[RMDB]
RNA sequence: GGGAACGACUCGAGUAGAGUCGAAAAUACAAUCGUCGUGGCCAGCAACCAAUGAUGAAGAAGGAGAUUUCGGUGACUUCGGCUCAUUCCAACAGCUCCUUGCCUGUCAGAAGUCCAGCUAUCAUGAGAGCGGUAAUUAUUUCGAUAAUUACCGCUCAAAAGAAACAACAACAACAAC
Reactivity to 2A3 in 0.01 (KOAc 150mM, MgCl2 10mM, bicine 150mM(pH8.5), 24C), signal-to-noise 1, nucleotides 027 to 126: u240a000c020a030a130u070c030g010u000c010g020u040g030g040c000c020a010g010c020a050a080c010c020a030a100u110g030a020u030g020a030a120g040a020a050g030g060a100g010a050u040u120u120c090g010g040u050g020a030c000u040u000c010g080g050c020u000c040a040u110u050c040c000a040a010c030a070g000c010u010c000c000u030u080g070c000c040u040g050u040c020a040g010a110a000g030u040c030c000a010g000c040u020a030u210c000a060u080g040a030
Reactivity to DMS in 0.01 (KOAc 150mM, MgCl2 10mM, bicine 150mM(pH8.5), 24C), signal-to-noise 4, nucleotides 027 to 126: u010a050c120a110a150u000c050g060u010c050g050u000g010g020c030c020a100g000c100a090a160c040c030a060a080u000g000a060u000g010a130a090g000a050a060g020g020a090g010a090u000u010u000c120g000g020u010g000a040c060u010u000c030g000g010c090u010c060a080u010u000c030c020a050a080c180a090g010c020u000c020c020u000u000g000c060c040u000g010u000c080a040g020a050a060g020u010c010c070a050g020c110u000a080u010c060a040u010g000a300

The record gives the reactivity of an RNA of 177 nucleotides to 2A3 and DMS. The RNA was probed in 150 mM KOAc, 10 mM MgCl2 and 150 mM bicine (pH 8.5) at 24 C. The data come from the RNA Mapping Database (RMDB), library OK2TST. The DMS profile rests on 2,871 reads.